[RMDB]
RNA sequence: GGGAACGACUCGAGUAGAGUCGAAAAGUUGCUGACCGGUCGCCGGACCUGGGUACCGUGGACGGCGGUGCUGGUGAACGUGGCAACCCGCGAUUGCUGGGAACCGCCGAUGUUCGAGAUGGACACCUGAUACCCCAGAAUUCGUUCUGGGGUAUCAAAAAGAAACAACAACAACAAC
Reactivity to DMS in 0.01 (KOAc 150mM, MgCl2 10mM, bicine 150mM(pH8.5), 24C), signal-to-noise 3, nucleotides 027 to 126: g010u010u010g000c020u000g010a120c090c030g000g020u000c030g020c050c060g010g000a090c080c020u000g010g020g010u010a060c060c050g010u010g000g000a140c050g010g030c010g000g020u000g030c010u020g020g000u000g010a010a060c080g030u010g000g010c160a090a170c230c020c010g010c020g000a120u000u010g020c010u020g010g010g000a120a040c070c040g000c020c010g010a040u010g000u000u000c040g010a130g000a130u010g000g000a080c060a140c080c070
About this RNA: Conditions: 150 mM KOAc, 10 mM MgCl2 and 150 mM bicine (pH 8.5), 24 C. An RNA of 177 nucleotides, treated with DMS and read out base by base. Reactivities are given for positions 27 through 126. It was measured as part of the RMDB library OK2TST.